[RMDB]
RNA sequence: GGGAACGACUCGAGUAGAGUCGAAAAGGAAUGUGCUUCGGCACAUUCCAAAAGAAACGCAGACGGCGAACGCCAAACGCUGACGAACCAAAAUCGAAGGUAAAACCCACCGGUUCGCCGGUGGGAAGUUGGAUAUGGGAUUCGUCCCAUAUCCAACAAAAGAAACAACAACAACAAC
Reactivity to 2A3 in 0.01 (KOAc 150mM, MgCl2 10mM, bicine 150mM(pH8.5), 24C), signal-to-noise 1, nucleotides 027 to 126: g000g000a000a000u040g000u010g000c050u110u180c240g000g000c000a000c010a000u000u030c000c000a000a000a000a000g000a050a050a010c060g020c030a020g030a070c070g030g000c070g090a250a040c120g020c030c000a020a110a000c030g040c030u030g040a050c010g020a040a060c020c050a060a030a020a110u190c120g090a070a050g090g000u100a030a060a030a160c010c000c000a000c030c000g000g070u020u070c300g020c110c010g000g000u020g000g000g000a000a000
Reactivity to DMS in 0.01 (KOAc 150mM, MgCl2 10mM, bicine 150mM(pH8.5), 24C), signal-to-noise 2, nucleotides 027 to 126: g000g010a010a000u000g020u000g020c000u010u000c270g020g000c000a010c000a000u000u010c000c000a010a010a020a130g010a070a090a140c210g000c000a000g010a220c120g010g010c000g010a110a040c210g010c060c000a080a110a190c130g000c020u000g000a130c070g010a080a100c040c000a080a040a100a040u010c090g030a070a080g020g010u030a040a090a160a100c010c000c000a000c000c000g020g000u010u000c210g030c000c000g030g020u000g000g000g000a000a000